[RMDB]
RNA sequence: GGGAACGACUCGAGUAGAGUCGAAAAGAUCGGAUUAAAUAGCAUUCUAUGUCAACAAUAUUGCUUCAGGGUAAAAGCAUAAGAGCGUACGAAACAGUGGCAACCUCUGAAGAAUUUUCGUAUUUGCAAUUUAUGAUAUCUUCGGAUAUCAUAAAUUAAAAGAAACAACAACAACAAC
Reactivity to DMS in 0.01 (KOAc 150mM, MgCl2 10mM, bicine 150mM(pH8.5), 24C), signal-to-noise 7, nucleotides 027 to 126: g000a080u020c060g000g000a060u020u030a040a070a100u030a080g000c050a070u010u030c060u020a040u010g010u010c090a080a090c170a070a070u010a070u000u010g010c020u000u000c030a050g010g000g010u020a050a090a090a090g000c030a060u030a070a080g000a100g010c060g010u010a050c050g010a100a050a050c140a090g020u010g000g020c100a100a090c090c010u020c020u000g010a060a030g000a070a050u010u000u010u010c050g000u000a050u020u020u010g010c180
Reactivity to 2A3 in 0.01 (KOAc 150mM, MgCl2 10mM, bicine 150mM(pH8.5), 24C), signal-to-noise 9, nucleotides 027 to 126: g070a040u110c050g040g020a020u120u170a070a060a100u120a070g040c010a040u090u040c040u120a080u100g070u130c020a020a030c020a100a130u110a090u150u160g070c000u020u030c020a030g000g000g040u050a070a070a040a010g010c020a030u040a150a030g050a010g030c020g030u060a020c030g080a090a160a020c050a050g030u060g080g010c000a020a040c010c010u060c020u010g000a030a020g030a040a030u060u050u060u080c060g010u060a100u040u100u090g010c010
Annotation:
An RNA of 177 nucleotides, treated with DMS and 2A3 and read out base by base. For DMS the reverse transcriptase was MarathonRT. The 2A3 profile rests on 12,852 reads.